[RMDB]
RNA sequence: GGGAACGACUCGAGUAGAGUCGAAAAUGCCAGCUAGCAAUUGGGUGUAGCUACUUUAAUCGAUCAUUCAUUCAGUCGCUUCCCGGGAAACCAAAGCUUUUGGGCUCCGGGGGAAGAAUGGUUGCAAGAUGAUAGUUAGGUUCGCCUAACUAUCAUCAAAAGAAACAACAACAACAAC
Reactivity to 2A3 in 0.01 (KOAc 150mM, MgCl2 10mM, bicine 150mM(pH8.5), 24C), signal-to-noise 4, nucleotides 027 to 126: u100g040c010c010a000g020c020u050a010g020c020a120a180u200u200g170g010g000u140g030u060a010g010c030u020a030c040u120u130u170a120a090u090c010g030a010u030c010a030u060u000c010a030u050u030c030a050g130u060c050g040c140u100u010c010c000c000g010g000g000a080a050a000c020c020a010a030a060g300c090u170u110u030u030g010g010g000c020u000c010c010g010g020g030g010g000a050a000g000a040a050u050g020g020u020u030g010c000a050a040
Reactivity to DMS in 0.01 (KOAc 150mM, MgCl2 10mM, bicine 150mM(pH8.5), 24C), signal-to-noise 4, nucleotides 027 to 126: u000g000c070c050a080g010c050u000a070g000c040a180a100u020u000g020g020g020u000g000u000a060g000c040u000a070c090u000u000u000a100a140u010c020g010a030u000c010a070u010u010c000a080u000u000c060a060g020u000c090g010c160u010u000c000c000c010g050g030g000a040a060a110c010c010a010a010a190g020c300u000u010u000u000g000g010g010c160u000c000c000g000g000g010g000g010a050a080g010a020a030u000g010g010u000u000g000c270a100a130